[RMDB]
RNA sequence: GGGAACGACUCGAGUAGAGUCGAAAACGAAUUCGAGUCCGGUGCAAGGUGUCUCGAUGGCGGCCGGGAUUGGGCCAAGUUGACCGCGGGGGAGCGAGCCGAUGUGAUCGACGAGUACCGGCUGGUCUCAUGAUAAAUCGUUCGCGAUUUAUCAUGAAAAAGAAACAACAACAACAAC
Reactivity to 2A3 in 0.01 (KOAc 150mM, MgCl2 10mM, bicine 150mM(pH8.5), 24C), signal-to-noise 9, nucleotides 027 to 126: c010g020a020a050u120u090c020g020a010g070u010c010c010g040g030u140g060c080a100a070g050g020u070g040u060c020u020c030g050a040u070g030g020c020g010g000c010c000g000g020g050a030u090u120g080g020g000c010c020a060a030g070u080u090g050a060c020c020g000c010g030g000g000g010g020a090g050c040g020a020g040c010c020g060a100u090g060u070g100a110u050c020g030a030c020g020a030g020u020a030c010c000g020g000c020u030g020g020u000c010
Reactivity to DMS in 0.01 (KOAc 150mM, MgCl2 10mM, bicine 150mM(pH8.5), 24C), signal-to-noise 7, nucleotides 027 to 126: c060g000a110a090u030u010c040g000a020g000u030c010c010g010g010u010g010c100a110a110g010g020u020g000u030c020u000c030g000a060u020g000g010c060g000g020c030c020g010g000g010a110u020u020g020g010g000c040c050a050a080g000u010u010g010a080c050c040g010c030g010g000g000g000g000a130g000c050g000a100g000c030c010g010a110u010g010u020g000a100u010c040g010a050c040g000a200g010u020a080c030c010g000g000c030u010g000g000u010c040